[RMDB]
RNA sequence: GGGAACGACUCGAGUAGAGUCGAAAAGAUAUGGAACCUGCAGGACAUGACGGAGUGUCGGAAACGACAUGACGUCAACAGCCUGUCAGGUUCCUAAGUCAAAAUCGACCCGGUUCGCCGGGUCGAACAAGGUAGGAUAGUUCGCUAUCCUACCUUGAAAAGAAACAACAACAACAAC
Reactivity to 2A3 in 0.01 (KOAc 150mM, MgCl2 10mM, bicine 150mM(pH8.5), 24C), signal-to-noise 4, nucleotides 027 to 126: g010a010u030a020u090g000g000a000a010c000c010u010g000c000a000g020g000a060c160a300u300g000a000c020g010g000a050g010u010g010u000c000g010g020a030a020a000c010g010a000c000a000u040g010a020c010g000u000c010a030a020c010a020g030c000c000u010g030u090c000a000g000g000u000u000c000c000u000a010a000g000u000c010a010a000a000a300u030c000g000a000c000c000c010g010g020u060u080c240g030c060c000g000g020g010u010c000g000a000a000
Reactivity to DMS in 0.01 (KOAc 150mM, MgCl2 10mM, bicine 150mM(pH8.5), 24C), signal-to-noise 6, nucleotides 027 to 126: g000a030u000a260u020g000g010a010a020c000c010u000g000c010a010g000g000a030c120a220u010g010a010c010g010g010a300g010u000g000u000c010g010g010a050a070a120c000g010a000c010a010u000g000a300c000g010u000c010a030a040c250a130g000c000c000u000g000u020c030a000g000g000u000u000c000c000u000a000a060g000u000c020a120a060a140a190u000c000g000a010c000c000c010g000g000u000u020c230g020c010c000g000g000g000u010c000g000a000a060

This 177-nucleotide RNA was probed chemically with 2A3 and DMS.
Values cover nucleotides 27 to 126.
DMS (dimethyl sulfate) methylates the pairing face of unpaired adenines and cytosines.
The reactions ran in a buffer of 150 mM KOAc, 10 mM MgCl2 and 150 mM bicine (pH 8.5), at 24 C.